RNA sequence: GGGAACGACUCGAGUAGAGUCGAAAAGAGAGGCAAUUUCGCUAAUCAAACGGGGACUACAAGAGCCGAUGGCGGUGUUCAGAUCGAGAUAGAUUACGAGGAGGAGCGUUAAUAUGGCGUUUCAUUUCAUCGCAUUGGAAAGCGUUGGCGGCCGUCGACCGAGACACUAUUUCGAUAGUGUCUCGGUAAAAGAAACAACAACAACAAC
Reactivity to 2A3 in 0.01 (KOAc 150mM, MgCl2 10mM, bicine 150mM(pH8.5), 24C), signal-to-noise 2, nucleotides 027 to 156: g030a000g000a000g000g000c010a070a030u100u180u250c080g010c070u100a030a150u090c030a000a070a070c040g000g000g000g040a030c030u050a020c070a190a040g000a020g140c030c010g100a030u060g040g020c020g000g070u010g070u030u050c060a040g000a110u080c040g020a010g010a160u110a050g040a030u000u190a100c080g030a030g010g020a030g050g020a010g000c030g000u030u030a210a060u160a160u230g050g000c070g030u050u050u050c050a100u060u070u040c020a050u030c000g000c020a020u080u060g030g030a150a040a000g000c010g020u020u010g010g000c000g020g020c000c000g060u040c010g000
Reactivity to DMS in 0.01 (KOAc 150mM, MgCl2 10mM, bicine 150mM(pH8.5), 24C), signal-to-noise 1, nucleotides 027 to 156: g030a050g040a290g000g060c060a180a110u000u000u000c010g000c010u000a070a300u000c050a070a080a110c080g000g060g000g010a100c070u000a050c090a060a210g010a090g050c020c030g000a100u000g080g020c010g030g000u000g020u030u000c030a090g030a110u000c010g010a100g000a090u000a050g000a130u000u000a050c050g010a050g000g000a170g050g000a030g010c030g050u020u020a020a030u000a180u000g000g000c070g010u010u030u010c020a070u020u010u000c050a080u020c080g030c110a140u000u010g000g000a030a070a090g050c120g000u010u000g010g080c000g010g000c030c050g050u000c050g030

Source information
Chemical mapping of a 207-nucleotide RNA with 2A3 and DMS. DMS adducts were read by reverse transcription with MarathonRT. For 2A3, 744 sequencing reads were counted.